[RMDB]
RNA sequence: GGGAACGACUCGAGUAGAGUCGAAAAUACUGGGUAAUUCUGCAUGACUGCCGUUUCUACUCCGCCGUAGGGUGUCUUGUAGCUGAAAGUGUAAGUGUUGCCGUAAGGUUGAGGCGGGUUAAAGCGAGUCUUACAGCCGUUUCGACGGCUGUAAGACAAAAGAAACAACAACAACAAC
Reactivity to DMS in 0.01 (KOAc 150mM, MgCl2 10mM, bicine 150mM(pH8.5), 24C), signal-to-noise 1, nucleotides 027 to 126: u000a080c030u000g000g030g000u020a100a100u010u000c010u000g010c020a050u000g010a060c000u010g070c070c010g020u010u010u040c040u000a080c040u020c000c060g000c030c010g010u000a080g000g010g020u010g010u000c040u030u020g020u000a090g020c260u010g000a090a080a140g000u000g010u010a050a050g030u010g020u000u000g030c030c030g020u030a080a130g010g020u000u000g000a140g000g010c040g000g000g020u010u010a030a080a070g000c140g010a160